[RMDB]
RNA sequence: GGGAACGACUCGAGUAGAGUCGAAAAGAUAUGGAGAAUCAAGAUAAGGUGCAUGCGAGGAGACAGAGUCGGAAACGACUCUGUCUCUACCCACCGCAUGAACUACACUUGAGAUUCUCCUAAGUCAUCUUAGCUAUCACUUCGGUGAUAGCUAAGAAAAAGAAACAACAACAACAAC
Reactivity to DMS in 0.01 (KOAc 150mM, MgCl2 10mM, bicine 150mM(pH8.5), 24C), signal-to-noise 1, nucleotides 027 to 126: g000a000u000a280u030g030g000a010g000a030a000u030c010a040a240g000a070u090a110a240g020g000u010g040c000a000u000g010c040g000a070g010g000a010g010a010c030a030g000a040g000u000c000g000g030a150a070a300c080g060a010c000u000c000u000g000u030c000u010c000u000a010c120c020c100a300c250c000g000c000a000u000g030a000a040c000u030a160c250a130c160u000u000g000a300g000a000u000u000c000u000c000c000u000a020a000g000u000c030a110
Source: RMDB library TTRINS, as collected in RNAgym. Structure probing data (DMS) for a 177-nucleotide construct.